The data come from the RNA Mapping Database (RMDB), library OK1LIB. Chemical mapping of a 177-nucleotide RNA with DMS and 2A3. Reactivities are given for positions 27 through 126. In probing experiments dimethyl sulfate is read out at A N1 and C N3, which are open when not base-paired. For 2A3 the reverse transcriptase was SuperScript II with manganese. The RNA was probed in 150 mM KOAc, 10 mM MgCl2 and 150 mM bicine (pH 8.5) at 24 C. The 2A3 profile rests on 12,225 reads.
RNA sequence: GGGAACGACUCGAGUAGAGUCGAAAAGUUGGGCGCCAGAUCCUGUGAGUUGGCCAAAUUGGAGGCGGUGGCAGCUCCGUUGAAGCCCAGCGAAAUGGUCAUAAUGGCAACGCACACAUAGGGAUCGACUGAUAUUAUCCUUCGGGAUAAUAUCAGUAAAAGAAACAACAACAACAAC
Reactivity to DMS in 0.01 (KOAc 150mM, MgCl2 10mM, bicine 150mM(pH8.5), 24C), signal-to-noise 5, nucleotides 027 to 126: g000u000u000g000g010g020c030g020c040c050a060g010a040u000c000c010u010g030u010g020a060g030u000u010g010g040c020c020a010a080a100u030u020g020g000a080g010g010c040g010g040u010g010g010c050a100g000c030u000c020c030g020u020u000g010a100a140g000c060c010c000a050g000c040g000a060a090a070u020g020g000u020c020a080u000a140a120u010g000g000c020a020a030c040g000c030a090c030a160c140a100u020a130g000g000g000a050u020c020g000
Reactivity to 2A3 in 0.01 (KOAc 150mM, MgCl2 10mM, bicine 150mM(pH8.5), 24C), signal-to-noise 9, nucleotides 027 to 126: g040u030u030g020g010g010c050g010c040c040a050g010a050u030c020c060u140g030u030g030a060g030u030u050g160g060c010c010a050a100a100u100u130g060g010a040g020g070c050g000g040u060g030g000c040a030g020c010u010c010c020g040u030u100g050a070a020g010c000c000c010a010g020c020g020a040a030a130u150g040g010u060c030a050u070a230a090u090g030g000c020a030a010c020g030c030a010c000a000c010a120u130a080g030g030g000a020u020c010g010